Chemical mapping of a 207-nucleotide RNA with 2A3. Reactivities are given for positions 27 through 156. The data come from the RNA Mapping Database (RMDB), library OK3TST. For 2A3 the reverse transcriptase was SuperScript II with manganese.
[RMDB]
RNA sequence: GGGAACGACUCGAGUAGAGUCGAAAAAAACAGUUGACAGUGUGGCAGCAUUAUAGCCAACUGCAGUUAUAUCGUUGGCAGUUGUGGCUGUAACAGCGCUACCUAAACCAACCGCCGUGUUGCGACUACCACUUGUAAUUGCGGCAAGUGAUGUUGCCGCGAGAGCCAAGUUCGCUUGGCUCUCGCGAAAAGAAACAACAACAACAAC
Reactivity to 2A3 in 0.01 (KOAc 150mM, MgCl2 10mM, bicine 150mM(pH8.5), 24C), signal-to-noise 1, nucleotides 027 to 156: a000a000a000c070a010g000u040u030g040a010c010a010g010u010g000u010g160g060c070a100g000c030a130u000u040a030u030a000g010c000c000a000a000c000u000g030c010a000g020u100u150a140u080a070u200c120g030u190u120g120g010c000a000g000u050u070g090u160g100g000c010u000g000u010a000a000c070a020g020c020g000c000u050a040c000c000u090a130a080a020c010c000a000a000c010c010g050c020c010g010u080g050u030u060g010c010g000a000c010u060a070c000c010a010c010u000u000g030u040a070a270u170u210g130c080g010g060c020a020a020g000u000g040a020u090g000u000u020g000c030